[RMDB]
RNA sequence: GGGAACGACUCGAGUAGAGUCGAAAAGUUGUGUAACUUAAUUUAAAUGAAUUGAAACAAAUUUAAUACAAGUGGAUGUAGGAUAACCGUCCGUCCUUUACAUUGGUAUAAAAGUGAUCUAAAAUUCGGCAGGGACGAGUCUUCGGACUCGUCCCAACGUAUUUACGAUGUUCGCAUCGUAAAUACGAAAAGAAACAACAACAACAAC
Reactivity to 2A3 in 0.01 (KOAc 150mM, MgCl2 10mM, bicine 150mM(pH8.5), 24C), signal-to-noise 3, nucleotides 027 to 156: g020u010u020g010u010g030u040a050a040c010u050u090a070a130u280u080u190a110a100a070u100g020a020a030u060u040g030a090a020a040c020a000a190a050u080u150u160a060a050u050a060c030a040a030g050u030g050g040a070u080g040u100a030g030g000a010u030a110a100c020c020g020u000c000c020g010u010c010c000u070u120u050a060c020a080u040u050g030g000u070a030u020a060a120a030a010g060u050g030a040u040c040u100a060a020a080a100u060u050c030g070g040c050a060g030g000g000a000c010g000a000g010u000c020u000u060c190g040g000a000c000u010c010g010u010c000c000c000a000a000
Reactivity to DMS in 0.01 (KOAc 150mM, MgCl2 10mM, bicine 150mM(pH8.5), 24C), signal-to-noise 1, nucleotides 027 to 156: g000u010u010g040u000g000u010a060a100c040u010u000a070a120u020u020u000a040a140a230u020g010a080a060u010u000g010a190a110a160c020a060a100a090u000u010u000a080a040u000a040c010a030a060g000u000g030g000a130u000g010u000a050g020g000a020u000a060a150c020c170g000u010c090c020g020u010c020c000u000u000u000a050c020a050u010u000g010g050u000a050u010a060a030a060a060g020u000g000a080u010c020u010a060a060a050a190u000u000c020g040g020c090a070g040g020g020a010c020g010a030g010u000c000u000u010c300g070g000a010c000u010c000g000u000c000c000c000a010a000

Chemical mapping of a 207-nucleotide RNA with 2A3 and DMS. For DMS the reverse transcriptase was MarathonRT. It was measured as part of the RMDB library M2RFPK. Values cover nucleotides 27 to 156. The RNA was probed in 150 mM KOAc, 10 mM MgCl2 and 150 mM bicine (pH 8.5) at 24 C.